[RMDB]
RNA sequence: GGGAACGACUCGAGUAGAGUCGAAAACUUUCCGAUCGGCUGCUGCGGGUAGAGGAACGGCUCGCCAAAGCCGAGGAACGCACCGCGAAAGCCGAGGACCGCGCCAACCGGGCCGAGUCCCUGUACCGCAUUGCGAUCACGUACCUGCGGCAGGUCGGUGGUAACCGAAAUUCGUUUCGGUUACCACAAAAGAAACAACAACAACAAC
Reactivity to 2A3 in 0.01 (KOAc 150mM, MgCl2 10mM, bicine 150mM(pH8.5), 24C), signal-to-noise 1, nucleotides 027 to 156: c070u020u070u020c000c010g060a100u050c000g030g000c010u000g020c000u040g010c000g000g040g000u010a000g030a130g170g020a120a130c000g000g000c000u040c040g220c050c070a180a230a000g010c040c010g010a060g050g000a000a040c000g000c000a010c050c120g010c000g000a160a050a000g120c030c000g040a000g010g010a000c000c020g040c040g010c020c000a240a160c100c080g210g010g000c030c000g030a060g000u030c000c050c000u030g070u070a030c050c050g020c030a010u000u130g010c000g070a060u030c060a000c130g060u040a000c030c000u000g010c010g060g000c040a030g020g070u070c040g000

Structure probing data (2A3) for a 207-nucleotide construct.
It was measured as part of the RMDB library OK3TST.
Conditions: 150 mM KOAc, 10 mM MgCl2 and 150 mM bicine (pH 8.5), 24 C.